RNA sequence: GGGAACGACUCGAGUAGAGUCGAAAAAAUAUCUGCUUAAAAUGCCAUGUGCCGCUAACCAUCUCCACAUGAGCAGCACAUGAGAGUCUCCAUUAAUUGCAUAUGGCAGCGAAAAGUGAUCUCUUGCAUUGUCGUGUAUUUUUUAUCACGUUUAAUAGGAUGAUUAAAUAUUCGUAUUUAAUCAUCCAAAAGAAACAACAACAACAAC
Reactivity to DMS in 0.01 (KOAc 150mM, MgCl2 10mM, bicine 150mM(pH8.5), 24C), signal-to-noise 2, nucleotides 027 to 156: a060a070u000a060u010c040u000g030c030u020u000a080a080a100a110u020g010c050c030a010u000g000u010g020c020c010g050c030u000a080a100c080c040a080u000c050u000c060c060a090c090a100u000g010a110g020c030a020g020c050a030c020a050u000g020a080g000a080g030u010c020u010c040c030a120u000u000a050a130u000u020g020c040a070u000a070u000g010g000c000a060g020c060g000a050a070a060a120g010u000g000a080u000c040u000c020u000u000g030c020a150u000u000g040u000c050g030u000g000u000a000u000u000u000u000u000u000a110u060c030a050c070g000u000u000u000a040a090u000a270
Reactivity to 2A3 in 0.01 (KOAc 150mM, MgCl2 10mM, bicine 150mM(pH8.5), 24C), signal-to-noise 5, nucleotides 027 to 156: a000a000u130a050u040c040u030g000c000u070u070a080a120a070a060u090g010c000c000a000u010g010u000g010c000c030g000c030u050a090a080c070c030a090u090c110u060c090c060a130c020a140u070g050a010g040c010a000g020c020a000c000a010u040g020a020g010a010g100u020c040u030c080c010a030u050u180a100a060u170u060g030c010a020u030a040u130g050g000c030a010g020c040g050a090a070a010a020g050u060g060a070u020c050u010c000u070u060g030c030a080u030u060g080u120c030g000u010g030u100a090u020u150u040u030u040u060a110u170c030a020c040g020u020u060u130a130a110u120a090